[RMDB]
RNA sequence: GGGAACGACUCGAGUAGAGUCGAAAAGAUAUGGAACGAGCCACAUCGAUCGUACGGGAUCGGAAACGAUCUUACGGGAGUCCGUUCCUAAGUCAAAGGGGUGCGUUAGUUCGCUAACGCACCCCAACGAUACAUUCAAGUUCGCUUGAAUGUAUCGAAAAGAAACAACAACAACAAC
Reactivity to 2A3 in 0.01 (KOAc 150mM, MgCl2 10mM, bicine 150mM(pH8.5), 24C), signal-to-noise 4, nucleotides 027 to 126: g020a020u080a050u120g030g030a100a090c110g040a120g200c060c030a080c010a120u110c060g070a090u050c040g010u040a070c130g070g060g020a040u030c030g000g000a080a040a000c010g000a000u000c010u040u090a030c030g130g060g000a020g020u070c120c080g000u000u010c010c000u040a100a020g180u170c060a040a070a140g000g000g000g000u000g000c020g000u010u010a020g000u050u070c150g030c190u000a000a000c000g000c020a000c000c000c010c000a000a000
Reactivity to DMS in 0.01 (KOAc 150mM, MgCl2 10mM, bicine 150mM(pH8.5), 24C), signal-to-noise 8, nucleotides 027 to 126: g010a050u000a070u000g010g000a130a090c210g010a150g020c020c020a040c070a040u000c040g010a250u000c040g010u000a060c240g000g010g000a020u000c000g010g000a070a060a170c010g010a010u000c010u000u000a040c050g010g010g010a020g000u000c090c080g010u000u000c000c000u000a050a070g010u010c160a070a160a140g010g000g000g020u000g000c000g000u000u000a000g020u000u010c240g010c000u010a000a010c000g000c000a000c000c000c000c000a000a000
An RNA of 177 nucleotides, treated with 2A3 and DMS and read out base by base.
For DMS, 15,002 sequencing reads were counted.
For DMS the reverse transcriptase was MarathonRT.
The data come from the RNA Mapping Database (RMDB), library TTRDEL.
Values are in units of 0.01, from 0 to 300, in steps of 10.
The reactions ran in a buffer of 150 mM KOAc, 10 mM MgCl2 and 150 mM bicine (pH 8.5), at 24 C.